[RMDB]
RNA sequence: GGGAACGACUCGAGUAGAGUCGAAAAACGGAUAAAAGGUACUCCGGGGAUAACAGGCUGAUCUUGCCCAAGAGUCCACAUCGACGGCAAGGUUUGGCACCUCGAUGUCGGCUCAUCGCAUCCUGGGACAUUACACGGGGUUCGCCCCGUGUAAUGUAAAAGAAACAACAACAACAAC
Reactivity to 2A3 in 0.01 (KOAc 150mM, MgCl2 10mM, bicine 150mM(pH8.5), 24C), signal-to-noise 3, nucleotides 027 to 126: a000c030g000g000a010u090a080a170a040a000g180g010u060a080c030u010c010c000g000g020g000g000a030u050a190a020c010a060g050g150c010u010g010a060u020c020u040u030g010c000c000c000a020a040g010a000g020u130c070c000a090c030a070u010c020g030a040c050g000g020c060a020a060g060g010u060u080u090g050g000c010a070c020c000u000c010g000a000u050g040u040c020g000g000c010u000c010a070u080c050g010c010a030u050c000c010u030g030g010g050
Reactivity to DMS in 0.01 (KOAc 150mM, MgCl2 10mM, bicine 150mM(pH8.5), 24C), signal-to-noise 4, nucleotides 027 to 126: a170c070g000g000a050u020a080a080a080a080g000g000u040a070c050u000c020c020g030g000g000g000a100u010a070a140c140a060g010g000c060u010g000a050u010c050u010u030g010c040c000c030a090a250g010a010g020u000c090c120a050c110a050u000c000g010a190c300g010g020c040a060a080g000g020u010u000u000g050g000c050a180c010c020u030c010g000a050u020g000u000c210g010g010c020u000c010a070u010c110g000c050a030u000c010c010u000g000g020g020

An RNA of 177 nucleotides, treated with 2A3 and DMS and read out base by base. Reactivities are rounded to 0.1 and cut off at 0 and 3. 2A3 adducts were read by reverse transcription with SuperScript II with manganese. For DMS the reverse transcriptase was MarathonRT.